[RMDB]
RNA sequence: GGGAACGACUCGAGUAGAGUCGAAAAUGACAUCGGGUGGCGGUGCUCGCGGUGCCUGCAAGCGAUGAUUCGAUGGCUCUGUGUCAUCUGGUGUCGUCUGAUGGUGGCUCAGGCACACCCCGGGGUGGGCGGAGGGCACGUUCGCGUGCCUUCCGCCAAAAGAAACAACAACAACAAC
Reactivity to DMS in 0.01 (KOAc 150mM, MgCl2 10mM, bicine 150mM(pH8.5), 24C), signal-to-noise 3, nucleotides 027 to 126: u020g020a080c050a050u010c040g000g000g020u030g050g000c070g000g030u010g000c010u010c060g000c130g000g010u000g000c020c010u030g020c150a060a060g000c050g000a020u020g020a060u010u010c100g000a030u000g020g010c000u020c160u030g020u000g000u010c020a020u000c000u030g010g040u000g010u010c020g000u010c010u000g000a150u000g010g010u000g030g000c030u000c080a130g010g000c010a100c020a100c040c020c040c020g000g000g020g020u010g000
Reactivity to 2A3 in 0.01 (KOAc 150mM, MgCl2 10mM, bicine 150mM(pH8.5), 24C), signal-to-noise 4, nucleotides 027 to 126: u160g030a010c010a040u030c010g000g020g030u120g070g090c130g060g020u050g020c020u040c040g020c040g040g040u070g010c010c020u060g060c070a040a020g010c000g050a040u140g060a040u150u110c050g000a020u030g030g000c010u010c080u230g230u090g020u060c000a020u010c050u070g040g000u030g010u020c020g020u050c030u040g050a070u080g030g050u040g070g000c020u010c050a020g020g000c000a000c000a010c000c000c000c000g020g000g000g010u080g040